[RMDB]
RNA sequence: GGGAACGACUCGAGUAGAGUCGAAAAGACGCCUGUGUGGCGAAGCGAGCAUGAGAAAGAGCCGCACAGUCCAUCUAAUAUAAAGCGGCCAGAUGGAUUGCUCGCGAAAAGAUCCAUCGCACUGAGAAUGAGUAAUCCUCUUCGGAGGAUUACUCAUAAAAGAAACAACAACAACAAC
Reactivity to DMS in 0.01 (KOAc 150mM, MgCl2 10mM, bicine 150mM(pH8.5), 24C), signal-to-noise 2, nucleotides 027 to 126: g000a160c080g000c040c020u020g010u010g000u030g060g040c020g010a060a130g000c000g040a050g010c000a000u040g000a300g000a170a300a190g000a140g050c000c030g050c000a080c120a050g000u000c050c040a140u070c070u020a080a070u100a100u010a080a140a050g000c000g000g010c000c000a170g000a090u020g010g010a160u010u000g010c010u000c020g000c010g000a030a000a080a130g010a150u010c030c020a130u000c080g000c110a190c020u020g000a050g010a200
Reactivity to 2A3 in 0.01 (KOAc 150mM, MgCl2 10mM, bicine 150mM(pH8.5), 24C), signal-to-noise 2, nucleotides 027 to 126: g160a020c050g040c010c030u110g030u050g070u100g050g030c030g020a020a000g010c020g000a000g020c000a060u090g030a070g060a050a180a020g070a040g030c000c000g030c000a080c000a000g050u000c000c000a060u110c050u120a070a010u070a130u040a280a110a060g030c000g020g000c040c040a030g050a120u010g000g020a000u000u000g000c030u000c000g000c000g000a000a030a000a000g000a010u010c020c000a040u040c000g000c030a030c030u080g070a010g130a090